Notes:
The record gives the reactivity of an RNA of 207 nucleotides to 2A3. It was measured as part of the RMDB library OK3TST.
[RMDB]
RNA sequence: GGGAACGACUCGAGUAGAGUCGAAAAUGAAAGGCAAUAGCUCAAACUGUUACUCUUUCCUGAACUGGUACUCUUUCCUUUGUUUGAAGAGCAACACUCAGUGCCUAACACCAAGAGGUAAAAUGGGAGAGGUCUGUGGAUUCCAAGGGAUGAUUAAGUAUCCAUCAUCCUUCGGGAUGAUGGAUACAAAAGAAACAACAACAACAAC
Reactivity to 2A3 in 0.01 (KOAc 150mM, MgCl2 10mM, bicine 150mM(pH8.5), 24C), signal-to-noise 1, nucleotides 027 to 156: u120g010a010a020a000g040g000c060a050a060u090a040g000c070u060c180a030a020a080c050u020g040u080u060a030c040u010c000u030u080u100c030c070u050g040a070a010c050u050g020g090u070a030c030u030c000u120u050u150c030c000u100u080u140g040u070u130u080g010a000a000g030a000g030c080a000a030c040a010c070u120c010a010g040u000g090c000c020u110a120a030c090a000c020c000a070a060g050a020g100g020u060a160a000a100a000u080g000g000g000a040g020a010g090g000u010c020u000g040u070g000g100a020u080u000c020c060a040a030g040g030g030a060u140g060a090u190u300a030a020